[RMDB]
RNA sequence: GGGAACGACUCGAGUAGAGUCGAAAACGUUUUCCACCACGAUCAAUUCUUGUCGCACAAAAGUGGACAGAUCCAAUGAAAGCGCUUGGCAAACAUUGAUUUUGUCGAAAACAUUUGUAACAUAGUCGUUGACUAUUAAAUGUUUUAUGUCGUACGGAGAAGUACAUGAAUUCGUUCAUGUACUUCUAAAAGAAACAACAACAACAAC
Reactivity to 2A3 in 0.01 (KOAc 150mM, MgCl2 10mM, bicine 150mM(pH8.5), 24C), signal-to-noise 9, nucleotides 027 to 156: c030g010u020u020u050u020c020c030a050c010c030a060c070g060a080u090c060a110a120u140u070c040u080u090g020u040c030g050c160a030c020a060a080a090a080g030u040g010g010a010c010a020g070a050u020c050c040a050a080u110g080a100a080a030g040c050g010c180u140u170g050g000c020a040a050a020c010a100u020u090g030a070u040u070u080u080g050u040c020g040a040a010a000a000c010a020u020u010u090g090u090a070a040c030a090u030a010g010u010c100g300u120u300g010a000c010u010a010u050u090a010a020a010u010g020u010u010u020u030a090u100g090u060c030g020u020a050c050g040g020
Reactivity to DMS in 0.01 (KOAc 150mM, MgCl2 10mM, bicine 150mM(pH8.5), 24C), signal-to-noise 4, nucleotides 027 to 156: c050g020u010u000u000u000c020c020a140c100c050a090c080g000a090u000c020a050a090u000u010c040u010u010g000u000c010g000c020a110c040a080a070a160a220g030u010g010g020a300c030a140g000a080u010c030c020a060a140u010g010a050a070a130g030c000g010c070u000u000g030g020c020a070a070a070c050a070u000u010g010a090u000u000u000u000g010u000c040g010a050a020a020a010c000a030u000u000u000g020u000a070a130c210a090u000a020g020u000c010g020u010u010g020a030c010u000a020u000u000a000a040a040u000g010u000u010u000u010a110u030g030u000c030g000u000a160c090g000g020
Structure probing data (2A3 and DMS) for a 207-nucleotide construct. The reactions ran in a buffer of 150 mM KOAc, 10 mM MgCl2 and 150 mM bicine (pH 8.5), at 24 C.